[RMDB]
RNA sequence: GGGAACGACUCGAGUAGAGUCGAAAAAUUGAUUUGAGACGUCGCCUUGCAGUGUUAACUUGGCUGUCAUGAACCUCUUUGAUCUUCCACAAAGGGUAGGCUACGGGUGAAACCUCUUAGGCUAAAAACAUUCGACAUGAUUCGUCAUGUCGAAUGUAAAAGAAACAACAACAACAAC
Reactivity to DMS in 0.01 (KOAc 150mM, MgCl2 10mM, bicine 150mM(pH8.5), 24C), signal-to-noise 2, nucleotides 027 to 126: a080u000u000g020a040u000u010u000g010a100g020a090c070g000u010c110g000c000c000u000u000g010c100a050g030u020g000u000u020a150a120c070u000u000g010g020c030u000g000u010c070a130u000g000a050a080c140c010u010c010u000u000u020g010a040u000c040u000u000c040c060a160c090a010a010a040g010g000g020u000a060g010g010c020u000a050c090g000g000g000u010g010a080a080a110c080c010u000c060u000u010a050g010g010c050u000a010a050a030a070
Reactivity to 2A3 in 0.01 (KOAc 150mM, MgCl2 10mM, bicine 150mM(pH8.5), 24C), signal-to-noise 1, nucleotides 027 to 126: a010u080u180g020a050u110u020u100g090a070g000a030c050g050u050c010g010c020c020u000u070g000c050a050g000u020g020u220u060a070a080c030u120u170g090g010c020u030g080u090c010a050u110g050a060a080c000c000u060c000u070u000u000g060a100u070c030u080u000c060c010a070c000a020a040a030g120g000g010u030a010g000g000c000u020a020c060g050g000g010u000g070a140a070a060c000c010u090c000u080u070a060g030g040c050u070a050a000a000a070